[RMDB]
RNA sequence: GGGAACGACUCGAGUAGAGUCGAAAAUUAAAGCUCUCCUAAAAUGGAAUGGGCUAUCUUGAAAACUAGUCACCAGUCAUGUUGAUCAACUGUUGGGCAUAAGCUGGAAGAGAUUUCUGCUCCAAAUGGGGGUUGGUGUAGAUGGCCUUUCUGGAUAGAGUAAAUCACUAUUCGUAGUGAUUUACUCAAAAGAAACAACAACAACAAC
Reactivity to DMS in 0.01 (KOAc 150mM, MgCl2 10mM, bicine 150mM(pH8.5), 24C), signal-to-noise 2, nucleotides 027 to 156: u020u000a050a110a200g000c030u000c030u010c010c020u010a080a080a110a090u020g010g010a040a100u010g020g040g000c030u010a040u000c050u000u000g010a140a080a080a110c100u000a040g020u000c050a080c020c000a040g000u010c040a090u000g010u010u000g020a130u010c000a050a070c060u000g020u010u000g040g000g000c060a090u010a090a100g010c090u000g010g000a090a100g000a090g010a120u000u000u000c050u000g010c030u000c030c060a020a060a110u010g040g010g040g030g020u000u050g020g010u000g000u000a040g010a060u000g000g010c050c020u010u000u010c010u010g020g020a260u000a160
Reactivity to 2A3 in 0.01 (KOAc 150mM, MgCl2 10mM, bicine 150mM(pH8.5), 24C), signal-to-noise 4, nucleotides 027 to 156: u060u040a110a090a010g030c000u020c000u030c010c020u140a160a140a130a180u290g020g040a060a130u130g030g040g000c000u030a040u040c030u050u110g110a060a070a030a060c050u040a040g080u070c010a020c080c000a010g030u070c030a040u080g040u070u060g050a110u070c030a030a070c060u060g050u080u050g030g000g020c030a070u060a050a070g020c040u020g040g010a060a020g050a020g010a040u040u080u050c000u030g010c020u020c010c020a040a060a230u110g030g000g000g020g000u020u040g000g030u020g010u010a010g010a070u020g040g000c000c030u030u030u030c030u030g040g010a060u170a140
The record gives the reactivity of an RNA of 207 nucleotides to DMS and 2A3. The RNA was probed in 150 mM KOAc, 10 mM MgCl2 and 150 mM bicine (pH 8.5) at 24 C. For DMS the reverse transcriptase was MarathonRT. The data come from the RNA Mapping Database (RMDB), library OK3TST. For 2A3, 1,990 sequencing reads were counted.